[RMDB]
RNA sequence: GGGAACGACUCGAGUAGAGUCGAAAAGAGAAGAAGCGCGCGAAUUGGAAACCAGGGAACCAUAUUACGCGCGCAAGCAACCGGGCCUUGGUUCCUUGGAAAGAUUAGAUAAUUACCCUGGUAAGAACACCGUAAAUAAUUUCGAUUAUUUACGGUGAAAAGAAACAACAACAACAAC
Reactivity to 2A3 in 0.01 (KOAc 150mM, MgCl2 10mM, bicine 150mM(pH8.5), 24C), signal-to-noise 6, nucleotides 027 to 126: g110a000g030a100a010g060a150a020g010c000g010c000g000c000g000a010a020u060u020g060g050a080a050a050c000c000a000g000g010g010a040a060c000c000a020u030a040u260u110a130c010g000c000g000c000g000c000a000a000g020c000a000a030c000c010g040g040g020c000c010u050u040g050g000u030u020c000c010u030u040g040g040a080a050a010g050a030u130u250a040g080a130u140a110a110u190u060a090c010c000c000u000g020g010u010a000a040g030a040a000
Reactivity to DMS in 0.01 (KOAc 150mM, MgCl2 10mM, bicine 150mM(pH8.5), 24C), signal-to-noise 5, nucleotides 027 to 126: g010a180g010a140a130g020a190a130g010c010g000c010g010c000g010a080a030u040u010g000g000a300a110a060c010c000a020g010g000g010a100a170c000c000a010u040a040u000u010a090c020g010c000g000c000g020c010a010a030g010c140a070a080c060c050g010g000g010c040c020u010u020g010g010u000u000c020c000u000u020g020g010a090a050a080g000a130u030u030a100g010a100u020a070a080u000u010a100c020c000c000u000g010g000u010a090a080g010a140a160

Conditions: 150 mM KOAc, 10 mM MgCl2 and 150 mM bicine (pH 8.5), 24 C. This 177-nucleotide RNA was probed chemically with 2A3 and DMS. It was measured as part of the RMDB library OK1LIB. For DMS, 8,111 sequencing reads were counted. The 2A3 profile rests on 7,977 reads.